[RMDB]
The data come from the RNA Mapping Database (RMDB), library OK3TST.
This 207-nucleotide RNA was probed chemically with 2A3.
Reactivities are rounded to 0.1 and cut off at 0 and 3.
The RNA was probed in 150 mM KOAc, 10 mM MgCl2 and 150 mM bicine (pH 8.5) at 24 C.
2A3 adducts were read by reverse transcription with SuperScript II with manganese.

RNA sequence: GGGAACGACUCGAGUAGAGUCGAAAAGCGAAAAGUGGAUGAAGCAUGGUAGGGUUGACCCAUUUAUCGGCUUUCUCCCACACCAACAGAAACCACAACGUCUUCAAACAGACGAAUUUUCCAAGGACGACACCUGUGAGAAUAUCUUCUCGCUUCACUAGGCCGUAAGGUUCGCCUUACGGCCUAGAAAAGAAACAACAACAACAAC
Reactivity to 2A3 in 0.01 (KOAc 150mM, MgCl2 10mM, bicine 150mM(pH8.5), 24C), signal-to-noise 1, nucleotides 027 to 156: g000c020g060a080a020a000a090g000u070g030g030a090u140g040a040a000g040c000a130u050g010g000u040a050g110g010g000u060u100g180a110c000c060c000a030u230u250u060a250u150c020g070g000c020u000u170u000c040u020c040c030c000a010c000a000c010c000a030a100c000a070g090a040a060a000c010c090a040c050a010a070c060g010u000c000u040u130c200a280a110a170c090a040g010a000c010g000a020a070u040u060u010u000c030c000a030a000g030g000a020c110g030a070c040a000c070c100u030g060u050g050a000g010a060a080u050a070u190c050u130u070c020u020c020g000c020u140u150c030a010